[RMDB]
RNA sequence: GGGAACGACUCGAGUAGAGUCGAAAACAUAUACUCAUUCCAACUAUGCCCGAUGUGCAUUUUUUAUUACCAGCCUAUGCAAUCAUCGAAACCGCUGGAGCUCUUUUAUUUAUCAGUGCAAUUAAGGAGUAAAUCCGCGUUUCGACGCGGAUUUACUAAAAGAAACAACAACAACAAC
Reactivity to 2A3 in 0.01 (KOAc 150mM, MgCl2 10mM, bicine 150mM(pH8.5), 24C), signal-to-noise 1, nucleotides 027 to 126: c000a000u300a000u000a090c050u050c010a190u140u000c090c070a000a050c200u060a050u150g070c030c010c000g000a040u240g050u000g100c070a020u000u000u000u000u000u300a210u090u180a090c000c020a000g090c000c000u000a000u090g000c000a020a010u160c050a020u050c050g070a080a000a000c080c110g010c080u060g000g000a000g000c000u070c000u190u080u090u000a070u290u020u000a110u300c060a070g090u010g010c000a040a040u070u040a090a090g020g120